[RMDB]
RNA sequence: GGGAACGACUCGAGUAGAGUCGAAAAGAUAUGGACUUUGAACUACCUAUACAGAGCGUUGAAAUCGGAAACGAUGGAGCUCGAAGUAGGCAAAGUCCUAAGUCAAAUCAACCGUUCGCGGUUGAAAGCUCUAGUUGUACUUCGGUACAACUAGAGCAAAAGAAACAACAACAACAAC
Reactivity to DMS in 0.01 (KOAc 150mM, MgCl2 10mM, bicine 150mM(pH8.5), 24C), signal-to-noise 1, nucleotides 027 to 126: g000a000u000a300u010g000g000a010c000u000u000u000g000a080a090c110u020a300c000c060u000a100u000a130c280a300g000a030g000c000g000u000u000g020a170a020a010u000c000g000g000a100a030a160c010g010a020u000g010g040a200g000c050u000c000g030a070a080g000u000a010g000g010c030a000a000a000g000u000c000c030u000a020a080g000u000c020a090a010a150u000c000a010a010c020c010g070u000u000c300g060c050g040g040u000u000g000a050a070a070
Reactivity to 2A3 in 0.01 (KOAc 150mM, MgCl2 10mM, bicine 150mM(pH8.5), 24C), signal-to-noise 1, nucleotides 027 to 126: g050a010u070a040u130g020g000a020c000u070u000u000g000a080a090c110u130a040c160c010u060a070u070a280c250a110g020a020g010c000g170u300u090g020a110a160a010u000c020g020g000a080a020a000c000g010a010u010g050g010a050g030c000u000c000g050a080a020g020u010a000g050g000c000a020a000a000g020u050c000c010u000a060a000g020u000c000a020a000a270u050c000a000a010c000c000g030u070u060c300g020c000g110g030u000u040g010a170a010a000
Structure probing data (DMS and 2A3) for a 177-nucleotide construct. The DMS profile rests on 672 reads. Conditions: 150 mM KOAc, 10 mM MgCl2 and 150 mM bicine (pH 8.5), 24 C. DMS adducts were read by reverse transcription with MarathonRT.